[RMDB]
RNA sequence: GGGAACGACUCGAGUAGAGUCGAAAAUUCCCGGACCACUGGACAGGGGUACUGCCUUUUCGGGGCAGCUGUCCGGUCAAGGCCAUACGGACAGCCGGGUCCACUGCCGAACAAAACAAAAAGAAAACGAGAGGUUGCAGUUCGCUGCAGCCUCUCGAAAAGAAACAACAACAACAAC
Reactivity to 2A3 in 0.01 (KOAc 150mM, MgCl2 10mM, bicine 150mM(pH8.5), 24C), signal-to-noise 5, nucleotides 027 to 126: u030u000c000c000c000g010g010a000c000c000a000c000u000g000g000a000c000a000g020g040g040g060u130a130c000u000g010c000c010u050u120u120u230c180g030g000g000g010c000a010g010c000u000g000u000c020c000g000g010u050c040a020a040g010g000c000c010a060u060a110c010g000g010a010c010a000g000c020c000g010g000g010u000c000c000a000c010u050g010c010c000g080a040a020c060a040a090a020a000c090a010a120a050a030a020g220a060a130a010a030
Reactivity to DMS in 0.01 (KOAc 150mM, MgCl2 10mM, bicine 150mM(pH8.5), 24C), signal-to-noise 3, nucleotides 027 to 126: u010u010c000c000c000g010g000a030c000c010a090c020u000g010g000a010c000a000g000g000g020g070u020a300c000u000g000c010c000u000u000u070u040c300g030g010g020g000c000a000g000c020u000g030u020c000c000g040g000u000c210a120a050g000g020c020c020a160u010a070c070g000g010a030c040a070g030c040c000g000g020g000u000c040c010a130c080u040g000c000c000g000a300a080c300a070a110a040a120c270a130a140a110a110a100g030a130a050a170a110
Conditions: 150 mM KOAc, 10 mM MgCl2 and 150 mM bicine (pH 8.5), 24 C. An RNA of 177 nucleotides, treated with 2A3 and DMS and read out base by base. Values cover nucleotides 27 to 126. It was measured as part of the RMDB library OK1LIB.